[RMDB]
RNA sequence: GGGAACGACUCGAGUAGAGUCGAAAAUUCAGUUUGCAUCAAAAGGAGUGCUCUGCAAACCUUAUACCUAAUAAAAAUCCUUUAUCAAGAAAGAAUGGAUCCUAUUGCACCAUAAAGCCUCCAUAUACUAACACAGAAGUUUCGACUUCUGUGUUAGAAAAGAAACAACAACAACAAC
Reactivity to 2A3 in 0.01 (KOAc 150mM, MgCl2 10mM, bicine 150mM(pH8.5), 24C), signal-to-noise 3, nucleotides 027 to 126: u050u000c010a000g010u030u060u020g030c040a060u060c050a130a110a100a060g070g020a070g140u080g000c010u000c030u080g010c020a020a020a000c000c010u050u070a060u090a160c000c010u040a130a110u160a140a300a040a050a010u050c000c000u040u080u080a180u120c070a140a040g070a260a130a030g040a040a080u040g010g020a020u000c020c000u070a090u130u210g040c030a040c050c040a050u140a090a140a000g020c010c000u000c000c010a010u030a020u020a090
Reactivity to DMS in 0.01 (KOAc 150mM, MgCl2 10mM, bicine 150mM(pH8.5), 24C), signal-to-noise 2, nucleotides 027 to 126: u010u010c110a130g040u010u000u000g000c000a050u000c070a040a020a150a140g000g000a100g020u000g030c040u010c060u000g010c030a020a020a040c010c070u000u000a060u000a170c030c040u000a080a090u010a050a110a050a120a100u000c010c000u000u000u000a080u020c060a060a190g000a050a100a070g000a100a060u010g000g000a060u000c020c090u000a090u010u000g010c090a020c080c060a040u010a060a070a120g010c030c000u000c000c020a140u000a070u000a150